[RMDB]
RNA sequence: GGGAACGACUCGAGUAGAGUCGAAAACUGGAGCGAACUGGCAAAAAAGGACGGUGGGGAGUGCCCAGCGGCCGACAGGAGUAAUUCCCGCCGAAACAGGGUUUUCACCCUUCCUUUCUUCGGGUGUCCUUCCUCGCGCCCGCAGGACCACCCCUCGGAGAAUGAUAGUGUUCGCACUAUCAUUCUCAAAAGAAACAACAACAACAAC
Reactivity to 2A3 in 0.01 (KOAc 150mM, MgCl2 10mM, bicine 150mM(pH8.5), 24C), signal-to-noise 1, nucleotides 027 to 156: c020u060g020g030a040g030c020g020a050a030c050u050g050g000c080a090a000a040a060a130a100g050g010a060c060g040g030u100g020g000g000g000a060g030u100g000c000c000c010a020g010c010g020g000c000c000g020a020c120a050g000g020a010g020u070a000a030u080u040c000c000c010g000c000c020g030a020a030a070c300a090g010g010g010u070u070u230u300c100a030c000c010c020u030u000c000c000u000u000u010c000u040u020c000g000g000g000u010g000u000c000c000u030u030c000c000u000c000g010c040g010c070c020c000g000c010a020g000g030a030c020c000a040c000c000c000c010u030c020g040

An RNA of 207 nucleotides, treated with 2A3 and read out base by base. 2A3 is a SHAPE reagent: it acylates the 2'-hydroxyl of flexible nucleotides of all four kinds. For 2A3, 1,632 sequencing reads were counted. The RNA was probed in 150 mM KOAc, 10 mM MgCl2 and 150 mM bicine (pH 8.5) at 24 C.